[RMDB]
RNA sequence: GGGAACGACUCGAGUAGAGUCGAAAAAUUGUGUCCGUAAUCGCAACACACGCGGUGCGUACGAUGACGCAUAGUUAGGAUAGGGUUAAGGGUAAGGAUAAACCGGACCAGGAAAAUCCAACCUAAACAAGUUGAUUGUGUUCGCACAAUCAGCUUGAAAAGAAACAACAACAACAAC
Reactivity to 2A3 in 0.01 (KOAc 150mM, MgCl2 10mM, bicine 150mM(pH8.5), 24C), signal-to-noise 9, nucleotides 027 to 126: a000u130u070g020u010g000u010c010c000g000u020a070a100u130c020g020c020a050a170c030a070c040a030c230g060c160g060g020u020g010c020g000u030a020c030g070a120u200g020a000c010g000c020a030u050a070g120u060u050a020g020g060a120u110a100g040g010g020u050u070a060a080g060g010g020u040a050a040g030g020a100u110a170a130a070c000c000g020g010a030c020c020a030g070g100a060a150a010a000u000c000c000a010a040c020c000u020a020a030a010
Reactivity to DMS in 0.01 (KOAc 150mM, MgCl2 10mM, bicine 150mM(pH8.5), 24C), signal-to-noise 9, nucleotides 027 to 126: a060u020u010g020u000g000u000c020c010g000u010a040a080u030c020g010c020a060a060c100a090c170a130c210g020c140g000g020u000g010c030g020u010a030c030g000a130u040g010a010c010g010c020a010u010a090g020u010u000a030g000g000a080u030a170g010g000g000u000u000a070a130g000g000g010u010a140a110g010g000a220u040a030a120a130c020c000g000g010a110c050c030a090g000g010a050a060a050a030u000c000c000a090a100c020c010u010a030a050a170
Conditions: 150 mM KOAc, 10 mM MgCl2 and 150 mM bicine (pH 8.5), 24 C.
Chemical mapping of a 177-nucleotide RNA with 2A3 and DMS.
For DMS, 44,367 sequencing reads were counted.
For 2A3, 32,748 sequencing reads were counted.